[RMDB]
RNA sequence: GGGAACGACUCGAGUAGAGUCGAAAAGGGAAAUCUCUUCAGACCUUCGAGGGGAGGGCGCCGCGGAUCACUGGCGUGCCGGCUCGGAAACAGGAGUUCCGACUCCUUCCUUUCUCUGCCGCGCCUCCACAUCCGAUCGUCGCUUCUCCUUUCGGACCAUAAUGGCUGUCUUCGGACAGCCAUUAUGAAAAGAAACAACAACAACAAC
Reactivity to 2A3 in 0.01 (KOAc 150mM, MgCl2 10mM, bicine 150mM(pH8.5), 24C), signal-to-noise 2, nucleotides 027 to 156: g010g000g070a110a160a160u160c030u010c000u100u100c030a090g000a160c000c020u030u020c030g000a000g000g000g000g000a010g000g000g000c000g000c000c020g020c010g000g000a010u000c000a000c060u000g010g010c050g050u070g010c020c000g000g000c010u020c050g010g030a040a060a040c300a300g000g000a000g020u110u180c090c100g110a110c000u000c000c000u020u000c010c000u000u000u010c030u010c010u020g000c010c000g040c150g010c010c000u010c000c010a040c040a010u000c000c020g100a300u040c010g000u030c000g020c000u300u220c010u000c000c000u000u010u000c000g010g010a010c020
Structure probing data (2A3) for a 207-nucleotide construct. For 2A3 the reverse transcriptase was SuperScript II with manganese. Conditions: 150 mM KOAc, 10 mM MgCl2 and 150 mM bicine (pH 8.5), 24 C.